Chemical mapping of a 177-nucleotide RNA with DMS and 2A3. High 2A3 reactivity points to a flexible backbone, as in loops and unpaired stretches. For DMS the reverse transcriptase was MarathonRT.
RNA sequence: GGGAACGACUCGAGUAGAGUCGAAAACACUUUCGGCUUGCUGCCCCAGUAGGCCGUAUUCGCCCGCAGCGUCACGCGGUCGCCGCUGCGCCAGCUCCCAAAGACGAAGGGGCCGGUGCCCACCGCCCGUUUUAAAGCGUUUCGACGCUUUAAAACGAAAAGAAACAACAACAACAAC
Reactivity to DMS in 0.01 (KOAc 150mM, MgCl2 10mM, bicine 150mM(pH8.5), 24C), signal-to-noise 3, nucleotides 027 to 126: c120a140c170u000u010u000c010g000g000c000u000u010g000c020u000g000c060c030c030c090a220g010u000a030g020g020c020c010g020u010a040u010u000c100g020c030c050c040g020c080a060g010c010g000u010c050a080c110g010c050g010g010u000c090g010c120c040g010c040u000g010c020g000c030c050a050g020c020u010c010c000c040a100a130a140g020a110c130g020a140a130g010g000g010g010c060c060g030g010u000g010c030c020c020a100c040c030g000c050c150
Reactivity to 2A3 in 0.01 (KOAc 150mM, MgCl2 10mM, bicine 150mM(pH8.5), 24C), signal-to-noise 1, nucleotides 027 to 126: c040a070c050u070u150u090c000g010g030c000u030u020g000c000u080g020c020c060c020c000a010g010u030a010g050g000c010c020g010u000a040u040u180c060g010c010c060c010g000c010a000g000c000g020u060c030a030c080g100c040g040g020u050c020g010c050c010g010c010u040g020c000g020c020c010a010g000c000u040c010c010c000a090a120a020g120a070c060g040a130a060g010g000g020g010c000c010g010g000u030g020c030c010c000a030c040c010g000c020c030